[RMDB]
RNA sequence: GGGAACGACUCGAGUAGAGUCGAAAAAGCGAGUGAACACUCCUAGAAAAUAGGAGUGAAACCGAUCAUAAACACUCGCAAGUAGUUAAACAAAGCAUAGCAUAGCUAUGCAGAUCGGUACUACAAAAUUACCUACCCACUUCGGUGGGUAGGUAAUAAAAGAAACAACAACAACAAC
Reactivity to DMS in 0.01 (KOAc 150mM, MgCl2 10mM, bicine 150mM(pH8.5), 24C), signal-to-noise 2, nucleotides 027 to 126: a170g030c010g010a000g010u010g010a180a300c010a010c020u050c000c020u000a060g000a130a080a050a140u000a000g000g000a000g010u000g000a000a080a080c000c020g000a000u020c000a090u040a120a020a070c000a000c000u000c000g000c000a020a040g000u000a040g000u120u030a080a140a100c220a040a050a090g000c000a000u000a000g080c030a300u070a050g000c010u000a000u000g000c000a040g000a000u000c070g030g060u000a020c060u010a020c030a070a010a200
Reactivity to 2A3 in 0.01 (KOAc 150mM, MgCl2 10mM, bicine 150mM(pH8.5), 24C), signal-to-noise 3, nucleotides 027 to 126: a000g010c000g000a010g000u020g020a090a000c000a000c000u000c000c000u030a040g090a080a300a010a030u010a000g000g000a010g000u000g000a020a000a000c010c000g000a020u020c000a010u230a090a060a010c010a000c010u030c000g000c000a030a050g000u020a000g010u010u150a120a100a020c120a060a090a000g000c000a000u000a000g000c070a240u130a100g000c010u010a010u010g000c030a010g000a000u020c030g000g040u020a030c000u000a010c000a000a140a050
Notes:
Chemical mapping of a 177-nucleotide RNA with DMS and 2A3. The reactions ran in a buffer of 150 mM KOAc, 10 mM MgCl2 and 150 mM bicine (pH 8.5), at 24 C. DMS adducts were read by reverse transcription with MarathonRT. Reactivities are rounded to 0.1 and cut off at 0 and 3. It was measured as part of the RMDB library OK1LIB. 2A3 adducts were read by reverse transcription with SuperScript II with manganese.